RNA sequence: GGGAACGACUCGAGUAGAGUCGAAAAAGGCACCCUUCUAUACCAUUUUACAUACAGAGUGGCUGAGAGGCUCUCCUCAGAGCUCUGUUUGUGAACGCAGAGCUUACUGGAGAUGCGUUGUAAGAACUGCGUUCAUAGUUCUGUGAAUGCGGUGCCACGUAAAUUUAGCAUUCGUGCUAAAUUUACGAAAAGAAACAACAACAACAAC
Reactivity to DMS in 0.01 (KOAc 150mM, MgCl2 10mM, bicine 150mM(pH8.5), 24C), signal-to-noise 2, nucleotides 027 to 156: a070g010g030c000a010c010c010c080u000u010c020u000a180u010a060c070c060a120u020u000u000u010a190c090a120u000a110c040a040g010a020g030u000g000g040c000u000g000a050g020a090g030g000c080u000c050u000c050c000u000c010a050g010a300g010c000u000c010u000g000u000u010u000g020u000g010a040a020c070g000c010a030g020a100g010c010u010u010a050c030u000g000g000a230g030a110u000g020c090g010u010u000g010u000a050a050g010a070a060c010u000g000c010g020u010u000c000a010u000a020g020u010u000c100u030g010u000g000a030a040u010g000c020g010g020u000g010c000c010a080
Reactivity to 2A3 in 0.01 (KOAc 150mM, MgCl2 10mM, bicine 150mM(pH8.5), 24C), signal-to-noise 4, nucleotides 027 to 156: a020g000g000c010a010c020c030c000u040u000c050u070a180u070a110c040c050a110u090u090u100u270a050c050a020u100a010c010a010g020a000g010u040g190g110c010u020g010a020g020a040g110g120c070u070c060u050c110c000u000c000a000g000a010g000c010u000c000u000g000u000u020u040g000u000g000a000a000c000g010c000a000g040a020g010c000u010u010a010c020u090g130g020a240g060a170u150g120c060g110u160u120g000u010a010a000g010a050a040c000u010g000c010g000u000u010c000a010u010a010g030u070u070c060u110g110u060g060a070a030u050g020c090g020g010u000g000c000c000a010

Structure probing data (DMS and 2A3) for a 207-nucleotide construct. The DMS profile rests on 6,055 reads. For DMS the reverse transcriptase was MarathonRT. The 2A3 profile rests on 2,790 reads.